[RMDB]
RNA sequence: GGGAACGACUCGAGUAGAGUCGAAAAACUCUGAUCAGGGUGCAGCAUUCACCUCUGCAACUUUUGCUGAUUGGGCAAAAAACAAAGGUAUACAAUUGGAAUUCAGUACUCCUUACCACCCCCAAAGUAGCACUAGGAAUUUCGAUUCCUAGUGCUAAAAAGAAACAACAACAACAAC
Reactivity to DMS in 0.01 (KOAc 150mM, MgCl2 10mM, bicine 150mM(pH8.5), 24C), signal-to-noise 2, nucleotides 027 to 126: a070c080u000c070u000g010a030u020c070a050g010g000g010u020g020c060a030g050c140a080u000u010c150a140c050c040u010c030u000g000c050a110a070c120u010u000u000u000g000c010u000g000a120u000u010g010g010g000c010a010a000a070a090a050a080c050a050a030a020g000g010u020a030u010a050c170a070a140u020u010g000g020a040a000u000u000c050a050g000u030a070c040u000c050c010u030u000a100c020c030a300c020c000c000c030c040a060a040a090g000
Reactivity to 2A3 in 0.01 (KOAc 150mM, MgCl2 10mM, bicine 150mM(pH8.5), 24C), signal-to-noise 1, nucleotides 027 to 126: a000c060u050c030u020g060a110u050c080a030g040g010g040u020g010c020a000g010c000a080u040u060c040a030c010c020u140c000u020g000c020a070a100c070u120u120u020u160g020c000u060g030a300u120u150g080g000g050c080a030a000a030a000a000a030c060a000a160a000g070g000u050a090u020a220c090a060a040u140u160g070g000a020a020u070u060c000a010g020u010a060c030u040c010c000u040u040a030c000c000a000c020c010c030c010c000a090a100a000g060

Chemical mapping of a 177-nucleotide RNA with DMS and 2A3. The DMS profile rests on 965 reads. Reactivities are given for positions 27 through 126. The RNA was probed in 150 mM KOAc, 10 mM MgCl2 and 150 mM bicine (pH 8.5) at 24 C. 2A3 adducts were read by reverse transcription with SuperScript II with manganese.